RNA sequence: GGGAACGACUCGAGUAGAGUCGAAAAGCCAGCCCCUCUGGGCCCAGAGGAAAGUGGAGUUGGGCAAUGCCACCUGCUGCACUGUCCAGUUUAAAAAGGAAGUCGAGGCUCGAAGGACCUGCUGUCCACCUCUGCAAAACUUCGGUUUUGCAGAGGUAAAAGAAACAACAACAACAAC
Reactivity to DMS in 0.01 (KOAc 150mM, MgCl2 10mM, bicine 150mM(pH8.5), 24C), signal-to-noise 2, nucleotides 027 to 126: g020c050c010a070g010c040c080c010c010u000c020u000g020g000g000c060c010c030a140g010a080g030g010a020a080a060g020u000g000g010a060g030u000u000g000g010g000c020a050a050u010g020c040c060a140c120c040u000g040c070u000g000c000a050c000u000g000u000c000c010a070g000u000u000u010a020a040a040a090a120g020g020a130a110g000u000c050g010a240g020g020c060u000c060g000a070a060g010g010a030c030c090u010g020c040u000g010u000c070c030